RNA sequence: GGGAACGACUCGAGUAGAGUCGAAAACCCCGUCCAAGACCGUAGGUGAAUAAGUUUUCUUAUUCUUAAUAAAAACCUACGUAGAUGGUGAACAGACAGAAUUUUCUGCUUCUGGACACCUUAGGCUGAUUAAAGUCUCCUUCGGGAGACUUUAAUCAAAAGAAACAACAACAACAAC
Reactivity to 2A3 in 0.01 (KOAc 150mM, MgCl2 10mM, bicine 150mM(pH8.5), 24C), signal-to-noise 2, nucleotides 027 to 126: c010c000c010c030g040u040c030c020a160a010g030a090c000c030g010u000a000g000g020u000g030a000a000u000a010a000g010u070u090u220u090c000u000u000a010u000u000c000u010u060a120a020u070a070a070a020a030a010c000c000u010a010c000g000u000a030g010a070u130g000g020u000g010a000a010c000a010g000a000c000a010g060a140a130u210u110u090u030c010u000g030c050u050u000c000u000g030g000a010c000a000c000c040u010u090a060g040g020c030u020
Reactivity to DMS in 0.01 (KOAc 150mM, MgCl2 10mM, bicine 150mM(pH8.5), 24C), signal-to-noise 1, nucleotides 027 to 126: c020c000c010c170g000u000c030c040a090a190g020a130c170c020g040u000a000g000g010u040g020a000a000u010a020a010g000u030u000u010u020c000u030u000a000u000u000c000u010u000a050a030u010a090a090a230a290a040c000c000u000a000c000g010u030a060g000a140u020g000g060u000g030a030a290c010a000g000a090c000a010g010a010a230u010u020u060u030c000u000g000c070u020u000c000u000g040g000a300c030a000c000c000u000u020a020g000g000c180u000
This 177-nucleotide RNA was probed chemically with 2A3 and DMS.
DMS (dimethyl sulfate) methylates the pairing face of unpaired adenines and cytosines.
The DMS profile rests on 1,032 reads.
The reactions ran in a buffer of 150 mM KOAc, 10 mM MgCl2 and 150 mM bicine (pH 8.5), at 24 C.